[RMDB]
The data come from the RNA Mapping Database (RMDB), library OK2TST. This 177-nucleotide RNA was probed chemically with DMS and 2A3. For DMS, 34,875 sequencing reads were counted. Conditions: 150 mM KOAc, 10 mM MgCl2 and 150 mM bicine (pH 8.5), 24 C. Values cover nucleotides 27 to 126.

RNA sequence: GGGAACGACUCGAGUAGAGUCGAAAAAGGCCGUCGGCUGAUCACCGACCCCGGGUCGGUGCGUCCGCCGCUGGCACCGCAGUUCGCCGCUGAUCUGCUAGUCAAAACGGUGUCGACGUUGCGCAGCUAGGCAAUAGAAAUUCGUUUCUAUUGCCUAAAAAGAAACAACAACAACAAC
Reactivity to DMS in 0.01 (KOAc 150mM, MgCl2 10mM, bicine 150mM(pH8.5), 24C), signal-to-noise 9, nucleotides 027 to 126: a120g020g010c010c020g010u000c010g010g010c000u000g010a030u000c020a060c000c000g010a020c010c010c210c230g020g020g030u000c000g010g020u000g010c180g010u000c010c110g010c010c010g000c020u000g010g010c010a060c090c030g010c040a060g010u000u000c040g010c020c030g000c040u000g010a060u010c040u000g010c020u000a100g010u010c070a030a040a060a080c050g000g010u000g010u000c050g000a060c090g010u000u000g010c040g010c120a110g010c130
Reactivity to 2A3 in 0.01 (KOAc 150mM, MgCl2 10mM, bicine 150mM(pH8.5), 24C), signal-to-noise 4, nucleotides 027 to 126: a010g100g010c000c000g010u030c000g010g000c010u000g000a020u000c000a000c010c000g010a010c000c020c060c040g240g030g000u000c000g000g000u010g010c040g020u000c000c010g000c000c000g000c000u000g010g000c000a000c010c020g010c000a010g020u050u020c010g010c040c010g010c070u030g030a100u040c010u050g020c050u070a050g080u110c020a020a040a050a050c040g030g020u040g040u070c030g020a070c070g060u110u110g000c050g010c030a060g050c040